[RMDB]
RNA sequence: GGGAACGACUCGAGUAGAGUCGAAAAACUAGUAUGUACAGGGGUGAGUUGACCUGUCAUCUAGACUGCUGACCAUCAACUCACCGGUCAGCUGGAUGAUGUCCACAGAGUACGACAUCAGUGCUCAGUGUAUUGACUUGUUCGCAGGUCGAUACACAAAAGAAACAACAACAACAAC
Reactivity to DMS in 0.01 (KOAc 150mM, MgCl2 10mM, bicine 150mM(pH8.5), 24C), signal-to-noise 9, nucleotides 027 to 126: a210c010u000a010g000u050a010u000g010u050a000c000a010g000g010g010g010u010g000a070g020u000u000g000a070c020c030u000g000u000c000a000u000c000u000a020g010a190c060u000g000c010u000g000a010c000c060a150u030c110a050a060c090u020c070a070c160c150g000g000u000c000a010g000c010u000g000g000a100u010g010a040u010g010u000c010c080a130c170a110g010a080g020u010a070c130g010a070c090a050u020c060a070g010u010g000c020u000c030a180
Reactivity to 2A3 in 0.01 (KOAc 150mM, MgCl2 10mM, bicine 150mM(pH8.5), 24C), signal-to-noise 9, nucleotides 027 to 126: a000c010u010a010g050u120a060u060g070u090a010c000a010g020g020g040g060u130g080a130g050u060u070g110a080c010c010u010g000u000c000a000u000c000u010a020g060a110c040u030g000c000u000g000a000c010c010a050u110c050a060a100c060u040c100a060c030c050g000g000u000c000a000g000c010u020g030g010a040u070g010a020u060g050u030c020c010a070c060a070g060a010g040u050a030c040g040a020c050a090u060c040a030g030u020g020c000u010c030a010
An RNA of 177 nucleotides, treated with DMS and 2A3 and read out base by base. Values cover nucleotides 27 to 126. 2A3 is a SHAPE reagent: it acylates the 2'-hydroxyl of flexible nucleotides of all four kinds. For 2A3, 115,661 sequencing reads were counted. The reactions ran in a buffer of 150 mM KOAc, 10 mM MgCl2 and 150 mM bicine (pH 8.5), at 24 C. The data come from the RNA Mapping Database (RMDB), library OK1LIB. The DMS profile rests on 79,414 reads.